About this RNA:
An RNA of 177 nucleotides, treated with DMS and 2A3 and read out base by base. The data come from the RNA Mapping Database (RMDB), library OK2TRN. 2A3 adducts were read by reverse transcription with SuperScript II with manganese.

RNA sequence: GGGAACGACUCGAGUAGAGUCGAAAAUUCACAAUCUUCAGGCUACAAGUCGAAGUCUUUUCAUCAGUAUCUGGGCUGAAGGCUAAGCAUGUGGAUGAUGAAUACUGACCUCUGUGUUUUUACGUCCCUAGGGUAGGUGGUUCGCCACCUACCCUAGAAAAGAAACAACAACAACAAC
Reactivity to DMS in 0.01 (KOAc 150mM, MgCl2 10mM, bicine 150mM(pH8.5), 24C), signal-to-noise 3, nucleotides 027 to 126: u000u000c040a000c170a140a040u000c020u000u000c020a020g000g020c010u010a090c170a110a040g010u010c030g020a230a040g010u000c010u000u000u000u000c090a150u010c120a110g000u000a030u010c190u000g010g000g020c020u010g000a070a110g000g010c010u000a060a060g010c030a040u000g070u000g010g000a040u010g010a140u010g000a030a030u010a070c160u000g000a050c040c030u000c090u010g010u010g020u000u000u000u000u000a050c170g000u010c040c020
Reactivity to 2A3 in 0.01 (KOAc 150mM, MgCl2 10mM, bicine 150mM(pH8.5), 24C), signal-to-noise 2, nucleotides 027 to 126: u030u010c010a000c030a020a160u000c010u010u030c050a010g010g010c010u010a070c020a260a020g000u000c010g000a050a000g020u030c090u070u110u090u050c140a210u030c020a040g120u110a150u040c090u210g000g040g000c020u020g050a090a030g010g000c030u040a040a000g000c000a010u060g000u030g060g040a030u020g000a050u050g030a020a000u030a110c060u040g090a050c000c060u080c040u070g120u020g040u070u050u020u030u060a040c050g050u040c030c000